[RMDB]
RNA sequence: GGGAACGACUCGAGUAGAGUCGAAAAGGCCUUUAUGAAUGGCGGAGGAAUUCGUAGUUCGAUGAAUGCAGGUGAUAUCACCUUUGGGAACAUCCUAAGCGUGCUACCCUUUGACGGCGAUAUCGUAAACAAGCCCUUAGUUCGCUAAGGGCUUGUUAAAAGAAACAACAACAACAAC
Reactivity to DMS in 0.01 (KOAc 150mM, MgCl2 10mM, bicine 150mM(pH8.5), 24C), signal-to-noise 2, nucleotides 027 to 126: g030g000c010c030u010u010u000a030u010g010a060a030u000g010g030c010g010g000a010g010g030a100a140u010u000c020g030u000a200g030u000u000c030g020a110u000g000a040a060u010g020c070a060g050g020u010g000a110u000a090u020c030a020c000c000u000u000u020g000g000g010a100a120c070a050u000c050c060u020a090a130g000c130g040u000g000c020u000a120c020c000c010u010u000u010g010a060c190g000g020c030g000a030u000a010u000c030g010u000a060
The record gives the reactivity of an RNA of 177 nucleotides to DMS. DMS adducts were read by reverse transcription with MarathonRT.